[RMDB]
RNA sequence: GGGAACGACUCGAGUAGAGUCGAAAAUCAGCAAUAGAAGGCCCAACUCCCGUAUCAGCAUUACUACACUCCAGUACAAUAGUAGUAGCAGGGGUAUUUCUACUCAUCCGCUUCUACCCCUUAAUAGAAACUAACAAACUAGUUCAAACUAUAACACGAAUACCUACAAGUUCGCUUGUAGGUAUUCAAAAGAAACAACAACAACAAC
Reactivity to 2A3 in 0.01 (KOAc 150mM, MgCl2 10mM, bicine 150mM(pH8.5), 24C), signal-to-noise 4, nucleotides 027 to 156: u070c020a010g020c010a020a040u030a120g080a090a020g060g020c000c010c000a010a030c030u030c000c010c000g030u060a050u050c020a000g010c010a020u010u060a010c010u010a000c010a010c020u020c000c010a030g040u040a070c030a060a090u050a080g030u010a010g000u020a010g010c030a020g000g000g000g010u010a040u020u140u050c040u020a030c000u000c040a110u050c040c040g020c030u060u000c000u030a030c000c000c000c000u000u050a040a010u050a060g030a020a030a000c010u040a010a030c030a130a060a040c050u020a010g060u030u020c020a070a010a020c030u130a050u140a210a030c100a000c190
Reactivity to DMS in 0.01 (KOAc 150mM, MgCl2 10mM, bicine 150mM(pH8.5), 24C), signal-to-noise 3, nucleotides 027 to 156: u000c030a120g030c040a080a130u010a130g030a090a120g030g000c050c020c040a080a120c060u000c010c030c000g000u000a100u000c040a080g010c030a070u010u010a040c030u000a060c020a060c040u000c030c040a120g010u000a070c070a060a080u000a070g020u000a090g030u010a050g030c030a040g010g000g000g010u000a060u000u010u010c060u000a050c020u000c030a080u000c020c020g010c030u000u000c030u000a080c010c000c020c000u000u000a040a080u010a070g010a130a020a030c010u000a050a250c030a120a070a090c180u000a060g010u000u000c020a070a070a130c060u000a030u010a090a110c100a150c140